[RMDB]
RNA sequence: GGGAACGACUCGAGUAGAGUCGAAAAAAUGUUCUGUUCGCAGAACAUUAAGCUGGUGUCCCGACCAGGCUGGAUGUCAGUACACGAAGUGCGAGAUCGGGAAUGCCUCCGGCUUCGGCCGGAGGAACUUUCGCCUAUAUUUCGAUAUAGGCGAAAGAAAAGAAACAACAACAACAAC
Reactivity to DMS in 0.01 (KOAc 150mM, MgCl2 10mM, bicine 150mM(pH8.5), 24C), signal-to-noise 2, nucleotides 027 to 126: a010a020u000g000u000u000c000u000g000u010u000c210g030c000a000g000a010a010c000a020u000u000a040a080g010c010u000g000g010u000g020u000c010c000c000g010a110c000c010a050g000g010c050u010g010g020a070u010g020u010c060a200g020u000a060c030a080c130g000a110a110g010u000g020c040g000a180g010a050u000c040g030g010g000a060a080u010g000c000c000u000c010c000g010g010c000u000u000c180g010g030c000c000g000g010a010g000g010a000a030
Reactivity to 2A3 in 0.01 (KOAc 150mM, MgCl2 10mM, bicine 150mM(pH8.5), 24C), signal-to-noise 2, nucleotides 027 to 126: a000a000u010g000u000u000c010u020g010u010u040c300g020c060a010g000a000a000c000a000u030u010a050a020g060c000u010g000g000u030g040u030c000c000c010g010a010c000c000a010g080g000c040u090g040g030a120u100g050u180c040a050g020u090a020c100a010c130g270a220a030g040u030g060c010g020a040g000a080u030c000g020g020g040a050a060u100g070c000c000u000c010c010g000g010c010u030u080c190g090g020c010c010g000g000a020g000g010a000a000